[RMDB]
RNA sequence: GGGAACGACUCGAGUAGAGUCGAAAACCUCUCCCGUCCUGGUGAAGGGAGAUUCCGGAACGUUUAGCAUUUGAGGGACAAAGCCGCCCCCGGGCGCUCCCCUCGGAGAUGUUCCAGGUGGGUUCACAGACGCCAGACUUCGGUCUGGCGAAAAGAAACAACAACAACAAC
Reactivity to DMS in 0.01 (KOAc 150mM, MgCl2 10mM, bicine 150mM(pH8.5), 24C), signal-to-noise 3, nucleotides 027 to 129: c000c000u040c040u010c000c010c000g000u030c010c040u000g050g000u060g010a000a000g010g050g030a090g010a120u050u060c060c080g010g010a020a030c020g090u000u000u030a010g120c030a130u000u000u000g000a020g010g040g000a020c070a110a100a040g030c060c110g040c030c000c010c160c180g010g020g080c010g010c010u010c000c000c000c000u020c030g040g020a060g010a030u030g000u020u000c030c000a070g030g010u050g020g050g050u100u040c040a080c080a110g020a000
Reactivity to 2A3 in 0.01 (KOAc 150mM, MgCl2 10mM, bicine 150mM(pH8.5), 24C), signal-to-noise 3, nucleotides 027 to 129: c010c000u030c000u000c000c000c020g090u050c030c030u130g160g000u080g090a110a040g000g000g000a010g000a020u190u000c010c000g000g000a040a000c000g030u040u110u170a080g030c090a190u030u050u130g030a000g020g010g010a010c060a040a040a020g050c160c070g000c010c010c000c000c070g010g000g000c010g000c010u000c000c000c000c000u000c000g000g010a000g000a010u020g000u060u000c000c000a070g000g000u080g020g080g040u040u080c060a030c010a070g080a010

An RNA of 170 nucleotides, treated with DMS and 2A3 and read out base by base. The reactions ran in a buffer of 150 mM KOAc, 10 mM MgCl2 and 150 mM bicine (pH 8.5), at 24 C.